This 177-nucleotide RNA was probed chemically with DMS and 2A3.
The DMS profile rests on 797 reads.
Conditions: 150 mM KOAc, 10 mM MgCl2 and 150 mM bicine (pH 8.5), 24 C.
High DMS reactivity at an A or C suggests that its Watson-Crick edge is free.
The data come from the RNA Mapping Database (RMDB), library OK2TRN.
RNA sequence: GGGAACGACUCGAGUAGAGUCGAAAAUGCUCUGUCAGUCCUGAUCUAUGUAGACGGAGUUUGGGUGAGCGAACGGACGGCAUGGAUUCCAAAUCCAAAGGAAAUAUCGCCAUGAGCAAGCGCAAAAGCGUACUAACGUCUUCGGACGUUAGUACGCAAAAGAAACAACAACAACAAC
Reactivity to DMS in 0.01 (KOAc 150mM, MgCl2 10mM, bicine 150mM(pH8.5), 24C), signal-to-noise 1, nucleotides 027 to 126: u010g050c000u010c000u000g010u030c000a120g000u030c040c040u000g000a100u000c080u010a110u000g010u010a080g010a030c000g000g000a010g000u000u000u000g000g000g010u010g020a140g040c030g010a110a100c120g020g000a060c020g030g000c020a080u000g010g010a140u010u010c070c060a010a070a060u000c080c020a020a020a140g000g020a020a030a100u000a110u000c100g000c010c000a070u010g000a090g020c000a080a270g000c030g010c200a050a040a110a100
Reactivity to 2A3 in 0.01 (KOAc 150mM, MgCl2 10mM, bicine 150mM(pH8.5), 24C), signal-to-noise 1, nucleotides 027 to 126: u050g010c000u000c000u000g080u020c010a070g070u060c000c040u070g100a100u000c080u090a200u110g300u170a060g000a070c050g040g030a090g000u090u130u070g030g000g020u030g040a020g040c060g020a020a000c040g000g040a000c000g000g050c030a020u110g100g000a130u000u110c030c040a100a080a000u070c060c020a000a030a090g150g020a010a160a000u130a080u070c040g000c060c000a000u040g010a000g000c070a020a020g000c070g000c110a000a000a000a110